Chemical mapping of a 207-nucleotide RNA with DMS and 2A3. For 2A3 the reverse transcriptase was SuperScript II with manganese. The data come from the RNA Mapping Database (RMDB), library RNAMAK. The DMS profile rests on 10,618 reads. The 2A3 profile rests on 14,215 reads. The reactions ran in a buffer of 150 mM KOAc, 10 mM MgCl2 and 150 mM bicine (pH 8.5), at 24 C. For DMS the reverse transcriptase was MarathonRT.
RNA sequence: GGGAACGACUCGAGUAGAGUCGAAAAGCGUACUACCAAAGUAACAAGGCUCAACAGCGUAUGGACCCUGCUUCCCAAAUAGGAAGCAGCCAUACGACAUGAGCCCGCCCUUUGGUAUCGCAAAACACUCAUUCAUACUUCGGUAUGAAUGAGUGAACUAGUAAAGUAGGUUCGCCUACUUUACUAGAAAAGAAACAACAACAACAAC
Reactivity to DMS in 0.01 (KOAc 150mM, MgCl2 10mM, bicine 150mM(pH8.5), 24C), signal-to-noise 4, nucleotides 027 to 156: g030c010g040u020a050c090u000a030c010c000a020a010a020g010u000a090a090c070a090a030g010g010c020u000c020a060a080c090a200g020c000g020u000a020u000g000g010a140c130c300c030u000g000c010u000u000c000c010c030a050a180a200u000a050g020g020a020a010g000c000a060g010c000c000a010u000a000c000g010a020c040a300u000g000a010g010c000c000c030g000c260c140c000u000u000u000g010g000u000a020u000c020g000c020a050a050a090a150c010a000c010u000c000a010u000u000c000a000u000a000c010u000u020c250g050g010u000a010u000g010a010a000u000g010a010g030u000g010a010a080
Reactivity to 2A3 in 0.01 (KOAc 150mM, MgCl2 10mM, bicine 150mM(pH8.5), 24C), signal-to-noise 9, nucleotides 027 to 156: g000c010g030u070a100c040u010a000c030c000a010a000a010g040u080a130a190c170a200a090g010g000c010u010c010a050a180c070a200g060c010g000u010a010u010g020g030a120c140c050c010u010g010c000u020u020c010c020c040a210a300a090u300a080g000g000a000a000g000c000a000g000c000c000a000u000a000c000g110a040c020a080u040g000a000g000c000c000c000g000c000c000c000u000u000u000g040g000u050a060u300c010g000c000a010a010a040a050c010a000c000u000c000a000u000u000c000a000u000a000c000u040u070c270g110g000u000a000u000g000a000a000u000g000a000g000u000g000a000a020